[RMDB]
RNA sequence: GGGAACGACUCGAGUAGAGUCGAAAAAAUGGCUGAAUUCCAGACCCGGGGAAGCCUUUCAGAUCCGCAUGUAAUUUGUUUAAACAAUUGCUGUUCAUCUGCCACAGCAGCACUUGUAAUGCCGCAGGGAGGAACUUGCAGCAUUUCUUGCUCACUAGUUUUAUACGUAGUUCGCUACGUAUAAAACAAAAGAAACAACAACAACAAC
Reactivity to 2A3 in 0.01 (KOAc 150mM, MgCl2 10mM, bicine 150mM(pH8.5), 24C), signal-to-noise 3, nucleotides 027 to 156: a000a000u050g020g000c030u020g030a120a130u180u070c000c030a040g070a120c050c020c030g030g010g000g010a050a020g010c020c000u030u040u060c040a020g000a040u010c040c030g030c030a040u100g040u090a050a090u060u110u090g130u050u170u210a100a160a020c020a000a030u060u010g000c000u000g030u060u030c040a100u010c050u070g040c040c020a070c010a040g000c010a020g020c000a030c070u040u070g020u090a040a020u020g030c000c010g010c010a010g060g020g000a110g130g030a090a090c020u030u050g020c020a000g010c000a000u040u060u020c020u020u100g010c020u030c050a050c060u090a020
Reactivity to DMS in 0.01 (KOAc 150mM, MgCl2 10mM, bicine 150mM(pH8.5), 24C), signal-to-noise 1, nucleotides 027 to 156: a060a040u000g030g020c060u000g000a150a090u020u010c040c030a190g000a170c040c000c050g000g040g020g020a110a060g000c020c030u000u000u000c050a080g010a110u010c000c050g000c080a110u010g030u000a040a100u000u000u000g010u020u000u000a110a060a110c020a030a060u000u000g010c010u000g020u000u010c060a080u000c030u000g000c060c030a100c140a100g030c020a020g030c000a040c160u010u000g050u000a080a020u010g010c000c020g020c000a070g000g010g010a140g020g000a070a060c050u000u000g010c000a030g000c020a020u010u000u000c030u010u000g020c070u000c050a050c060u000a150